Record summary
The record gives the reactivity of an RNA of 207 nucleotides to 2A3 and DMS. The RNA was probed in 150 mM KOAc, 10 mM MgCl2 and 150 mM bicine (pH 8.5) at 24 C.
RNA sequence: GGGAACGACUCGAGUAGAGUCGAAAACGAUGAUUGUUCGCAAUCAUCGAAAAAACCGUAGGGUUUAGUGGGCUUCAACAGCCACAGUUCGAAAGAGCUGUGGACAUGAAGCCACGAACCCUAAACGGAAAAAACACUGUGUUUCGACACAGUGUAAGCAUAGACUAUUCUUCGGAAUAGUCUAUGCAAAAGAAACAACAACAACAAC
Reactivity to 2A3 in 0.01 (KOAc 150mM, MgCl2 10mM, bicine 150mM(pH8.5), 24C), signal-to-noise 4, nucleotides 027 to 156: c000g000a010u000g000a010u030u000g010u100u110c220g000c140a000a010u010c000a010u000c000g060a070a020a000a000a000a000c010c000g010u020a020g000g020g010u020u030u060a180g010u220g120g080g060c000u000u000c000a110a130c060a140g020c010c000a000c000a000g000u020u010c010g050a130a070a070g010a000g000c000u000g000u010g000g000a000c000a110u050g000a000a010g000c000c000a000c000g000a000a000c000c010c000u000a010a020a010c010g010g070a100a090a000a010a000a010c020a000c010u030g000u000g020u010u090u160c260g080a000c000a000c000a000g000u000g010u000a030a020
Reactivity to DMS in 0.01 (KOAc 150mM, MgCl2 10mM, bicine 150mM(pH8.5), 24C), signal-to-noise 1, nucleotides 027 to 156: c020g010a030u000g000a010u000u000g040u000u000c300g010c040a020a010u000c000a030u000c000g010a000a050a030a100a040a070c000c000g040u000a090g010g000g030u000u000u000a030g020u010g030g040g020c000u000u000c010a050a220c160a210g010c000c000a020c010a020g000u000u000c020g010a230a120a270g000a000g040c000u000g000u000g020g040a030c060a210u020g000a030a000g010c000c000a010c010g010a010a030c000c000c000u000a000a040a090c000g000g030a000a040a060a080a090a030c000a060c000u000g050u010g000u000u010u010c300g030a180c000a000c000a020g000u010g000u000a010a100
For DMS, 3,624 sequencing reads were counted. 2A3 adducts were read by reverse transcription with SuperScript II with manganese. DMS adducts were read by reverse transcription with MarathonRT.